An RNA of 177 nucleotides, treated with DMS and read out base by base.
The reactions ran in a buffer of 150 mM KOAc, 10 mM MgCl2 and 150 mM bicine (pH 8.5), at 24 C.
It was measured as part of the RMDB library OK2TRN.

RNA sequence: GGGAACGACUCGAGUAGAGUCGAAAAGUCGAGGAGCAGGCCGUGAAGGCUCAGAUCUUCACCGACGUGUACGCGAAGAUCACGGCAGGAACCGACGAGUGGAACUCUCUUAGCGUCCCUGCAGGAGAAAGAACUUCCUGUUCGCAGGAAGUUCUUUAAAAGAAACAACAACAACAAC
Reactivity to DMS in 0.01 (KOAc 150mM, MgCl2 10mM, bicine 150mM(pH8.5), 24C), signal-to-noise 2, nucleotides 027 to 126: g020u010c020g010a150g010g000a090g030c060a160g000g000c030c010g010u000g020a080a120g030g000c080u020c120a110g020a060u000c020u000u010c000a030c090c040g010a100c120g010u000g010u000a120c160g000c070g000a040a010g000a020u000c020a090c070g000g000c000a050g010g010a100a080c050c030g030a070c140g000a090g030u010g000g000a070a150c090u000c020u000c010u000u000a130g000c050g010u000c020c020c000u000g020c070a040g000g000a110g000
For DMS the reverse transcriptase was MarathonRT.